[RMDB]
RNA sequence: GGGAACGACUCGAGUAGAGUCGAAAAAGAGUCUAUUGAGCUAGUUGGUAGUCCUCCGGCCCCUGAAUGCGGCCAAUCCUAACUGCGGAGCACAUACUCCCAAUCCAGGGAGCAGUGUGUCGUAAUGAGAUAAUAGGAGCUUCGGCUCCUAUUAUCUAAAAGAAACAACAACAACAAC
Reactivity to DMS in 0.01 (KOAc 150mM, MgCl2 10mM, bicine 150mM(pH8.5), 24C), signal-to-noise 4, nucleotides 027 to 126: a050g000a070g000u020c010u000a060u010u000g000a080g040c100u020a070g010u000u000g000g020u010a030g000u010c110c060u000c050c040g000g010c050c030c030c020u000g000a050a050u010g000c180g000g020c020c100a040a070u010c020c000u010a060a100c150u010g000c040g000g010a180g010c020a010c000a020u000a300c000u000c000c000c000a080a100u080c200c290a100g000g000g000a010g000c100a040g040u000g010u030g000u000c050g010u000a050a100u020g000
Reactivity to 2A3 in 0.01 (KOAc 150mM, MgCl2 10mM, bicine 150mM(pH8.5), 24C), signal-to-noise 4, nucleotides 027 to 126: a000g090a010g010u010c020u050a190u070u110g060a030g040c080u060a020g090u060u060g000g030u020a060g010u070c020c040u000c020c030g060g020c010c000c000c010u080g120a120a020u080g000c020g010g010c000c000a010a080u070c000c000u040a030a110c020u030g010c020g010g010a060g040c020a010c000a000u120a030c010u000c000c010c030a020a040u140c060c030a090g000g000g000a010g010c040a070g040u020g000u000g030u010c000g000u010a060a120u180g070